[RMDB]
RNA sequence: GGGAACGACUCGAGUAGAGUCGAAAACGGACAGAACCGUUCCUGUGAUGGUGUUACACUGCUGGGAGAGGAAUGUCUUGUCUUCAUCCGGUUGCCUGCGCCACUGUUCUGGUGGCGUCUGGCACUGGGUCGACCCGUGGUUCGCCACGGGUCGACCAAAAGAAACAACAACAACAAC
Reactivity to 2A3 in 0.01 (KOAc 150mM, MgCl2 10mM, bicine 150mM(pH8.5), 24C), signal-to-noise 1, nucleotides 027 to 126: c000g000g050a000c000a060g000a170a080c000c000g060u110u190c020c010u060g100u170g100a250u300g000g000u100g000u250u050a060c040a030c000u070g000c000u030g000g000g000a040g000a000g000g070a100a000u020g060u000c000u060u150g140u000c120u020u050c000a130u160c010c000g000g120u110u010g000c000c000u000g000c060g000c010c010a000c000u040g280u300u150c300u260g000g000u000g000g000c000g000u000c000u010g000g010c000a000c000u000g000
Chemical mapping of a 177-nucleotide RNA with 2A3. The RNA was probed in 150 mM KOAc, 10 mM MgCl2 and 150 mM bicine (pH 8.5) at 24 C.